[RMDB]
About this RNA:
The record gives the reactivity of an RNA of 177 nucleotides to DMS. The RNA was probed in 150 mM KOAc, 10 mM MgCl2 and 150 mM bicine (pH 8.5) at 24 C.

RNA sequence: GGGAACGACUCGAGUAGAGUCGAAAAAACACUGUGUAGGAUAGGUGGGAGGCUUUGAAGUGUGGACGCCAGUCUGCAUGGAGGCGACCUUGAAAUACCACCCUUUAAUGAAGAAAAACAAAGCCAAUCCUCUAUUUGUGUUCGCACAAAUAGAGGAAAAAGAAACAACAACAACAAC
Reactivity to DMS in 0.01 (KOAc 150mM, MgCl2 10mM, bicine 150mM(pH8.5), 24C), signal-to-noise 2, nucleotides 027 to 126: a090a050c060a090c040u010g020u010g040u010a080g010g020a110u000a030g020g020u010g020g010g010a150g010g060c030u000u000u020g010a090a100g000u000g020u000g000g000a060c000g030c150c180a060g000u000c000u020g000c040a020u000g000g010a120g000g000c030g020a070c050c010u010u020g000a030a060a060u040a080c020c010a030c020c020c020u000u020u010a080a060u020g010a100a110g010a010a010a030a090a080c080a080a030a100g000c050c090a110a150